[RMDB]
RNA sequence: GGGAACGACUCGAGUAGAGUCGAAAAAUGACCUCAUUCUAACUUAACUAAUUACAUCUGCAAUGACCCUAUUUCCAAAUAAGGACAUAUUUGGAGGUACUUGGAGGCUGGGUCUUCAACUUAUGAAUUUUGCAGAGGACACAGCUCAACUAGUAACACGCUCUAUUAAUUUCGAUUAAUAGAGCGUAAAAGAAACAACAACAACAAC
Reactivity to 2A3 in 0.01 (KOAc 150mM, MgCl2 10mM, bicine 150mM(pH8.5), 24C), signal-to-noise 4, nucleotides 027 to 156: a000u080g080a050c020c020u060c020a080u170u080c060u090a050a140c050u130u110a030a070c030u070a060a090u140u100a150c040a110u060c050u130g050c070a070a080u070g020a090c010c010c010u030a100u040u060u010c010c000a000a010a030u040a050a050g110g020a050c020a070u060a000u010u000u010g010g000a020g020g010u030a040c040u030u060g030g040a030g000g100c000u010g000g000g000u010c000u000u010c000a060a040c000u090u150a070u260g160a170a140u210u090u100u220g020c020a020g010a000g020g000a000c010a000c010a010g040c020u090c080a060a030c020u000a000g070u060a030a020c020
Reactivity to DMS in 0.01 (KOAc 150mM, MgCl2 10mM, bicine 150mM(pH8.5), 24C), signal-to-noise 1, nucleotides 027 to 156: a090u000g000a130c020c010u020c010a080u010u010c000u000a100a100c020u000u000a060a220c110u000a130a140u000u000a050c030a150u010c050u010g010c040a150a110u000g000a180c020c020c040u000a040u000u000u010c020c060a010a040a050u010a050a050g020g010a140c120a170u000a020u000u000u000g010g000a040g040g010u010a010c050u000u040g000g000a090g040g010c070u000g010g030g020u010c020u000u000c010a100a030c040u000u010a070u040g010a140a220u010u010u010u020g060c000a190g010a050g040g000a120c040a080c080a060g010c000u010c020a070a080c050u010a060g000u000a100a130c070